[RMDB]
RNA sequence: GGGAACGACUCGAGUAGAGUCGAAAAAGAGAGUUUAUCGAAACGUUGGUCAGUCUCAACCGUGUGUCGAAGGUGGUGAAGGGUGGACGGCGCUUCUCGUUCACCGCGCUGAGCGUCGUGGGGGACGGCAGCUAGAGUAAUUCGUUACUCUAGCUGCAAAAGAAACAACAACAACAAC
Reactivity to DMS in 0.01 (KOAc 150mM, MgCl2 10mM, bicine 150mM(pH8.5), 24C), signal-to-noise 4, nucleotides 027 to 126: a080g000a110g020a110g030u000u000u000a080u010c070g010a090a070a040c110g020u000u000g040g010u000c080a110g010u000c080u010c040a120a060c050c050g010u000g020u000g020u000c070g010a080a080g010g010u010g000g010u000g000a080a100g020g000g020u010g010g000a050c030g020g000c080g000c040u000u000c080u000c000g010u000u010c140a060c130c120g000c020g000c070u000g010a070g000c040g010u010c000g010u010g000g020g000g010g000a080c190g010
Reactivity to 2A3 in 0.01 (KOAc 150mM, MgCl2 10mM, bicine 150mM(pH8.5), 24C), signal-to-noise 3, nucleotides 027 to 126: a000g140a010g030a010g020u110u110u110a170u120c090g030a060a040a070c050g060u100u120g070g000u020c030a020g060u030c030u010c060a010a040c030c030g040u080g020u020g030u080c030g030a080a050g060g050u120g000g030u110g100a080a040g070g000g030u090g040g030a010c000g020g010c020g000c000u120u070c020u030c020g100u200u120c060a060c090c030g000c010g000c040u050g020a020g000c030g000u030c000g000u050g010g000g000g010g000a000c000g040

An RNA of 177 nucleotides, treated with DMS and 2A3 and read out base by base. For DMS the reverse transcriptase was MarathonRT. DMS (dimethyl sulfate) methylates the pairing face of unpaired adenines and cytosines. Reactivities are rounded to 0.1 and cut off at 0 and 3. The RNA was probed in 150 mM KOAc, 10 mM MgCl2 and 150 mM bicine (pH 8.5) at 24 C.